[RMDB]
RNA sequence: GGGAACGACUCGAGUAGAGUCGAAAACGCUGGGUUGAGCAAGAUGAGAUCCCAACAGCUUCUGAAGCGCGCACGGAAGACAUGGAGAUUUGAGCUCAACCUGUGCUGAAGCGCGCACGGCAACCGAAAGGUGCGAUACCAGUGAUUCGUCACUGAACCAGGAGAUACGGUUCGCCGUAUCUCCUGGAAAAGAAACAACAACAACAAC
Reactivity to 2A3 in 0.01 (KOAc 150mM, MgCl2 10mM, bicine 150mM(pH8.5), 24C), signal-to-noise 1, nucleotides 027 to 156: c040g010c000u020g000g000g060u020u010g000a000g000c050a080a040g090a280u300g060a100g010a090u070c010c020c030a040a020c130a070g020c000u000u000c000u000g040a140a070g000c010g000c000g000c000a000c010g020g030a000a000g060a020c060a260u300g000g060a070g000a040u100u120u230g120a040g000c000u000c000a000a000c010c000u010g010u050g000c000u220g010a080a000g000c010g000c000g020c010a000c000g000g000c010a000a080c000c000g040a010a010a100g050g000u000g000c000g000a040u080a190c040c020a000g040u000g000a050u080u090c180g060u100c120a000c050u070g020a020a110